The record gives the reactivity of an RNA of 170 nucleotides to DMS and 2A3. DMS adducts were read by reverse transcription with MarathonRT. The data come from the RNA Mapping Database (RMDB), library 15KLIB. Reactivities are given for positions 27 through 129. The DMS profile rests on 9,538 reads. Conditions: 150 mM KOAc, 10 mM MgCl2 and 150 mM bicine (pH 8.5), 24 C. The 2A3 profile rests on 4,816 reads.
[RMDB]
RNA sequence: GGGAACGACUCGAGUAGAGUCGAAAAGUCCCCCCAUGCCCGUUCCACGGCUCCCUUCCAGAAGGGCGGGGGUGGCCUGGAGCGUCGGGCCCCAGCAGUCCGUGGAAUUCACCCUCUUACCGCUUCUACCCAGCGUCGUUCGCGACGCUGAAAAGAAACAACAACAACAAC
Reactivity to DMS in 0.01 (KOAc 150mM, MgCl2 10mM, bicine 150mM(pH8.5), 24C), signal-to-noise 4, nucleotides 027 to 129: g010u080c000c000c000c000c000c000a070u060g020c030c020c030g100u050u000c040c040a030c130g000g000c000u050c030c000c050u060u010c040c110a140g040a150a090g050g050g030c260g000g000g000g000g000u020g030g020c050c030u020g010g080a080g010c140g080u040c020g000g000g000c020c070c080c070a060g060c040a170g050u020c090c010g010u040g020g000a050a060u060u060c070a120c000c000c000u040c020u040u010a100c100c020g030c030u010u030c050u000a130c060c070
Reactivity to 2A3 in 0.01 (KOAc 150mM, MgCl2 10mM, bicine 150mM(pH8.5), 24C), signal-to-noise 2, nucleotides 027 to 129: g030u000c000c020c000c000c000c000a000u040g000c010c020c000g020u010u020c000c000a030c000g010g000c030u070c010c000c000u040u000c000c000a100g070a180a110g130g010g010c040g020g010g000g010g020u110g050g010c000c000u010g030g000a130g030c020g090u120c030g020g000g010c000c000c000c000a050g040c020a000g020u010c010c010g050u030g000g040a030a000u080u050c020a110c000c000c000u030c000u010u090a080c090c020g020c020u060u040c010u020a020c010c000